[RMDB]
This 177-nucleotide RNA was probed chemically with DMS. High DMS reactivity at an A or C suggests that its Watson-Crick edge is free. Conditions: 150 mM KOAc, 10 mM MgCl2 and 150 mM bicine (pH 8.5), 24 C. Source: RMDB library OK2TRN, as collected in RNAgym. For DMS, 699 sequencing reads were counted.
RNA sequence: GGGAACGACUCGAGUAGAGUCGAAAAACGGGCAUCGUUGGACCGGGUGAUUUCAUUAUCCGCCUCCAGCGGAUGAUGCAGCGUCAGCCGCCCAUUGGCGCGUUCGCGGAUGAAAAGCCCGUGUUCAUCGCAUCCCGUAGUUCGCUACGGGAUGCGAAAAAGAAACAACAACAACAAC
Reactivity to DMS in 0.01 (KOAc 150mM, MgCl2 10mM, bicine 150mM(pH8.5), 24C), signal-to-noise 1, nucleotides 027 to 126: a080c070g010g000g000c040a110u010c040g000u030u000g000g020a020c150c010g010g010g030u000g000a110u010u000u000c070a000u000u000a000u000c000c030g000c020c090u050c300c300a100g030c000g010g000a010u000g000a080u000g010c020a170g000c040g000u000c030a040g000c030c040g000c130c010c040a190u020u000g000g020c000g010c030g020u000u000c190g020c010g010g010a040u000g010a040a010a080a300g000c000c000c070g000u000g000u010u000c000a050
DMS adducts were read by reverse transcription with MarathonRT.